[RMDB]
RNA sequence: GGGAACGACUCGAGUAGAGUCGAAAACACAACACAAUUACCAUACGCUAAUACUGUCACGGUCAGUGCACGCCCACCAGGUAAUCAGGGUAAGUAUCUCAACGAGCAGACGGUCGCAACGGUUGAGGAGAUGUCCCUCUCGGCAGUCGGGGAGAUCCUGACGAGAAAUUUUCGAAUUUCUCGUCAGAAAAGAAACAACAACAACAAC
Reactivity to 2A3 in 0.01 (KOAc 150mM, MgCl2 10mM, bicine 150mM(pH8.5), 24C), signal-to-noise 5, nucleotides 027 to 156: c090a020c080a120a090c060a040c050a130a170u140u090a070c020c060a060u080a150c080g010c060u100a110a050u110a210c030u050g040u080c030a050c150g060g010u030c070a050g030u020g070c060a010c070g000c000c010c010a050c020c030a040g020g050u090a090a060u120c040a040g050g020g030u050a060a020g070u050a100u040c050u010c030a060a080c040g020a020g020c010a030g020a060c060g030g040u090c050g040c070a070a060c060g060g010u030u050g010a030g060g000a050g010a020u100g060u060c010c010c000u040c010u030c010g040g010c010a020g040u060c060g000g000g000g000a050g000a010u040c000
Reactivity to DMS in 0.01 (KOAc 150mM, MgCl2 10mM, bicine 150mM(pH8.5), 24C), signal-to-noise 2, nucleotides 027 to 156: c050a160c050a130a050c060a000c030a070a060u000u020a060c020c030a110u000a090c090g020c050u000a120a100u010a050c020u000g020u000c050a070c080g060g020u000c070a060g050u000g010c030a050c070g010c030c020c010a060c060c050a110g000g000u010a030a050u000c030a080g020g030g010u000a020a140g010u010a100u000c010u000c050a080a080c030g020a190g020c060a100g010a090c010g060g030u000c070g000c010a100a040c020g010g050u000u020g000a130g000g010a110g000a070u000g020u000c020c000c020u000c050u000c020g020g010c060a030g010u000c030g000g030g070g000a090g000a070u010c030
Overview
Chemical mapping of a 207-nucleotide RNA with 2A3 and DMS. For DMS the reverse transcriptase was MarathonRT. For DMS, 3,147 sequencing reads were counted.